RNA sequence: GGGAACGACUCGAGUAGAGUCGAAAAUCAGAAUCAGGCCGGAGUGUUUAGCGCUCCGUAAACACGGUCGUACAUCCAGCCGGUAGCCAGGUUCCUUGCAUUGAGUGAUGUACGGAGUUUAUAGAGCAAAAGAAAGACCUGUUCGCAGGUCUUUCAACGUGGUAAUAUGCUUCGGCAUAUUACCACGAAAAGAAACAACAACAACAAC
Reactivity to 2A3 in 0.01 (KOAc 150mM, MgCl2 10mM, bicine 150mM(pH8.5), 24C), signal-to-noise 1, nucleotides 027 to 156: u090c010a000g120a030a030u030c020a020g070g000c000c020g020g020a010g030u090g040u110u130u300a110g080c040g000c010u000c000c000g010u020a010a010a000c100a010c050g160g080u140c000g010u010a000c000a060u000c010c000a020g120c050c010g040g020u050a010g010c010c010a010g000g030u140u070c030c000u080u110g050c010a120u050u130g030a050g040u140g000a010u010g000u010a010c040g040g000a070g030u090u140u030a150u120a050g050a000g040c040a040a020a160a040g000a000a000a000g000a000c000c000u000g010u020u040c200g000c020a000g000g030u020c000u000u010u000c010a000a000
The record gives the reactivity of an RNA of 207 nucleotides to 2A3.